[RMDB]
RNA sequence: GGGAACGACUCGAGUAGAGUCGAAAAGAUAUGGACCUGGGUGAACGCGAAGAACUCGGAAACGAGGGAGCGUCACCGGGUCCUAAGUCAAAACAGCUGUUUAGACCUUCGGGUCUAAACAGCUGAACAGUAUGUGCUUGUUCGCAAGCACAUACUGAAAAGAAACAACAACAACAAC
Reactivity to DMS in 0.01 (KOAc 150mM, MgCl2 10mM, bicine 150mM(pH8.5), 24C), signal-to-noise 3, nucleotides 027 to 126: g000a010u000a300u020g020g000a030c000c010u000g010g040g010u000g000a100a010c010g010c030g010a110a110g010a170a140c000u010c000g020g000a140a080a190c000g010a010g000g010g000a080g010c000g020u000c010a010c000c000g000g010g010u000c000c010u000a000a040g000u010c040a050a050a130a230c020a010g000c010u000g000u000u000u000a000g010a020c000c010u000u030c240g050g020g000u000c000u000a000a020a000c000a000g020c000u000g000a030a110
Reactivity to 2A3 in 0.01 (KOAc 150mM, MgCl2 10mM, bicine 150mM(pH8.5), 24C), signal-to-noise 2, nucleotides 027 to 126: g020a030u090a040u090g020g000a010c030c020u210g300g070g000u020g030a300a030c020g050c000g170a300a080g020a060a010c000u010c000g010g010a050a060a020c010g000a010g000g000g050a030g000c010g000u020c000a020c000c030g000g000g000u010c000c000u000a000a000g020u000c010a000a010a090a140c000a000g020c010u020g000u000u000u000a010g000a000c000c000u020u120c300g040g000g000u000c000u000a000a000a000c000a000g000c000u000g010a000a010